The data come from the RNA Mapping Database (RMDB), library OK3TST. Structure probing data (DMS and 2A3) for a 207-nucleotide construct. For DMS the reverse transcriptase was MarathonRT. The RNA was probed in 150 mM KOAc, 10 mM MgCl2 and 150 mM bicine (pH 8.5) at 24 C. The 2A3 profile rests on 2,246 reads.
[RMDB]
RNA sequence: GGGAACGACUCGAGUAGAGUCGAAAAACACGUUCGAACGAUCUCGAACGUGUACUCUCACACACGUACGUACUCACGAACUCACUCGUGUGUGAACUCGUACGUGAACUCACGAGAGAGUGUGUGAGAACACGAGAACGAACUCGUGAGUUCGAGACGCCUAUACCUCAUUCGUGAGGUAUAGGCGAAAAGAAACAACAACAACAAC
Reactivity to DMS in 0.01 (KOAc 150mM, MgCl2 10mM, bicine 150mM(pH8.5), 24C), signal-to-noise 1, nucleotides 027 to 156: a050c010a010c000g000u000u000c010g010a060a200c020g040a270u000c100u000c000g030a010a020c000g000u000g000u000a010c070u020c000u000c000a140c100a080c060a040c020g030u040a030c020g020u000a160c060u000c000a060c050g010a060a100c180u000c030a270c100u000c110g000u000g000u010g000u020g000a020a050c070u010c030g020u000a050c020g000u000g010a020a020c020u000c000a030c000g010a100g010a150g000a220g030u020g000u000g040u000g020a100g040a190a120c020a060c010g000a100g000a120a120c100g020a160a250c000u020c010g140u000g000a040g040u000u000c040g020a060g000a300
Reactivity to 2A3 in 0.01 (KOAc 150mM, MgCl2 10mM, bicine 150mM(pH8.5), 24C), signal-to-noise 3, nucleotides 027 to 156: a000c000a000c000g000u000u030c000g020a160a120c160g070a300u100c080u010c060g000a000a000c000g010u000g020u020a020c020u010c000u010c010a050c000a000c000a000c070g040u030a010c020g010u040a040c010u020c030a030c000g060a150a080c040u050c270a070c090u040c070g020u000g000u010g000u010g050a020a050c080u060c060g030u060a000c010g010u020g040a010a000c000u000c000a000c000g010a000g000a000g010a030g040u000g000u000g000u010g110a040g030a070a010c010a010c020g120a110g070a190a010c100g020a020a020c010u010c010g000u000g000a020g000u040u030c040g010a000g000a000